[RMDB]
RNA sequence: GGGAACGACUCGAGUAGAGUCGAAAAGACUGCGUGCACUGGAGACGAUAUCGAGCCGGAAAUUAAUCGAUAAUGUCUCUUGUAGUGGAUACGAUCCGGCAAGUAUCGACUACAUGUGCUCGUAGGAACUAUAUAGUGCUUUCGAGCACUAUAUAGUAAAAGAAACAACAACAACAAC
Reactivity to 2A3 in 0.01 (KOAc 150mM, MgCl2 10mM, bicine 150mM(pH8.5), 24C), signal-to-noise 9, nucleotides 027 to 126: g080a020c000u000g000c000g010u010g000c000a000c010u020g000g010a000g000a000c010g020a020u010a000u070c010g000a010g010c000c010g010g120a070a120a050u300u280a100a160u120c000g000a010u020a050a080u120g020u000c000u000c010u030u120g020u020a020g010u020g130g000a000u000a010c000g010a020u010c000c000g000g000c030a050a010g000u000a000u010c030g070a010c000u000a000c000a030u100g000u000g000c000u000c000g000u000a000g000g010a000
Reactivity to DMS in 0.01 (KOAc 150mM, MgCl2 10mM, bicine 150mM(pH8.5), 24C), signal-to-noise 7, nucleotides 027 to 126: g010a180c010u000g000c010g020u010g000c010a010c010u070g000g000a000g000a030c000g010a100u000a000u020c000g010a110g010c010c010g010g000a110a130a130u030u040a080a100u010c000g010a010u000a020a090u010g010u000c000u000c000u010u030g020u010a010g000u010g000g000a010u000a010c000g000a100u010c000c000g000g000c010a090a190g010u000a000u000c000g000a020c000u000a010c010a100u040g010u000g000c000u000c000g010u000a010g000g010a070